[RMDB]
RNA sequence: GGGAACGACUCGAGUAGAGUCGAAAAUACGGUCUUGCCUCUCAGGGGGGCGAUUUUUGACGCCAGCCGGUCCCAUUUCAGGUUUGAGCGCCAUUCACUGUCGAUGUGGACUCCAUAGACAUCGAACCCCUACAGGCAAAUUCGUUUGCCUGUAGGGAAAAGAAACAACAACAACAAC
Reactivity to DMS in 0.01 (KOAc 150mM, MgCl2 10mM, bicine 150mM(pH8.5), 24C), signal-to-noise 1, nucleotides 027 to 126: u020a090c150g000g020u000c090u000u020g030c010c010u020c070u000c260a150g020g000g000g000g000g020c010g010a010u000u000u000u000u000g010a030c030g000c000c010a060g050c000c010g010g020u000c010c010c020a150u010u000u000c090a090g010g010u000u020u010g010a080g000c050g030c000c000a050u020u000c090a100c150u000g010u000c050g000a060u000g010u000g010g020a110c100u010c000c000a050u010a140g000a060c030a060u000c020g010a080a200c220
Reactivity to 2A3 in 0.01 (KOAc 150mM, MgCl2 10mM, bicine 150mM(pH8.5), 24C), signal-to-noise 2, nucleotides 027 to 126: u130a020c040g030g030u030c080u040u130g100c000c010u020c050u050c140a200g050g010g030g000g060g070c020g000a030u010u060u070u160u190g070a030c050g020c040c010a010g000c000c020g000g010u010c000c000c020a030u040u120u090c030a010g000g040u030u090u100g070a080g000c020g000c010c000a100u120u070c070a070c100u090g000u100c020g020a070u070g020u040g020g110a090c000u000c030c030a080u040a070g100a030c000a030u030c020g040a040a030c010